[RMDB]
An RNA of 207 nucleotides, treated with 2A3 and DMS and read out base by base. 2A3 adducts were read by reverse transcription with SuperScript II with manganese. For 2A3, 5,591 sequencing reads were counted. The reactions ran in a buffer of 150 mM KOAc, 10 mM MgCl2 and 150 mM bicine (pH 8.5), at 24 C.

RNA sequence: GGGAACGACUCGAGUAGAGUCGAAAACGUAAAGGGCGAGCUUGUGUCCGGAAUGGUUCCGCCGUGAUCGGGCCAUGCAAUAGUUGCCAACGACAACUAUGCUCCGGUUGCUCAGGCAGCGUAACGCACAAUGGAACAACCUUCGGGUUGUUCCAAAGUAUGAGAGAGAGUUCGCUCUCUCUCAUACAAAAGAAACAACAACAACAAC
Reactivity to 2A3 in 0.01 (KOAc 150mM, MgCl2 10mM, bicine 150mM(pH8.5), 24C), signal-to-noise 6, nucleotides 027 to 156: c050g020u110a060a020a090g110g040g000c010g010a080g000c010u030u020g000u010g010u050c010c000g020g000a040a040u050g000g020u290u300c020c040g000c050c100g130u180g060a240u120c000g010g000g000c010c010a020u040g020c020a060a160u000a010g000u000u010g030c060c070a080a050c070g070a060c010a000a000c010u000a000u030g010c030u010c030c000g030g000u020u160g010c010u000c010a000g000g020c010a040g050c020g040u070a070a020c050g030c040a050c040a070a160u090g000g000a000a000c000a000a000c000c000u020u040c100g030g000g000u000u000g000u010u000c000c000a000a000a000
Reactivity to DMS in 0.01 (KOAc 150mM, MgCl2 10mM, bicine 150mM(pH8.5), 24C), signal-to-noise 4, nucleotides 027 to 156: c060g020u000a060a090a130g000g010g020c040g010a130g020c030u000u000g000u010g020u010c000c020g020g000a100a060u000g020g010u000u000c050c030g030c100c130g010u000g010a090u000c040g010g000g030c010c020a070u000g000c110a090a060u000a030g030u000u000g010c000c020a170a170c200g000a120c010a010a020c000u000a040u000g010c080u000c020c020g000g000u000u000g010c020u000c030a100g000g030c030a130g010c040g010u000a080a130c040g010c040a070c070a150a190u000g020g000a030a050c000a010a020c000c000u000u010c300g040g030g010u000u000g010u000u000c000c010a010a010a090